Chemical mapping of a 207-nucleotide RNA with 2A3. For 2A3, 571 sequencing reads were counted. It was measured as part of the RMDB library OK3TST. 2A3 adducts were read by reverse transcription with SuperScript II with manganese.
[RMDB]
RNA sequence: GGGAACGACUCGAGUAGAGUCGAAAAGUUAGUUGCUCCAUGCGUCAAUUAUGACACAACAAUGUCCCGCCGGCAAUACAUUACAAACCGGAGGGUAUUGACAUGUGUAUCAUGAAUGGUAUAGCGUGUUUCGUGAACGAGAUAGAAAGGCGUUGAACGGAAAUUAUGUCUUCGGACAUAAUUUCCGAAAAGAAACAACAACAACAAC
Reactivity to 2A3 in 0.01 (KOAc 150mM, MgCl2 10mM, bicine 150mM(pH8.5), 24C), signal-to-noise 1, nucleotides 027 to 156: g020u070u120a030g000u020u060g000c020u040c020c040a050u070g010c020g050u080c060a020a100u050u010a060u150g000a000c000a000c000a020a130c010a040a030u040g120u240c010c010c010g000c050c000g000g000c070a030a070u040a140c060a140u210u190a130c130a170a120a020c010c010g000g010a020g050g000g000u020a020u000u010g020a080c060a270u020g000u000g040u070a010u010c010a000u110g080a040a080u080g050g000u140a110u080a140g030c050g000u080g000u010u050u080c030g000u020g070a070a000c060g010a000g010a130u020a170g120a090a200a130g080g000c030g000u000u030g020a050a020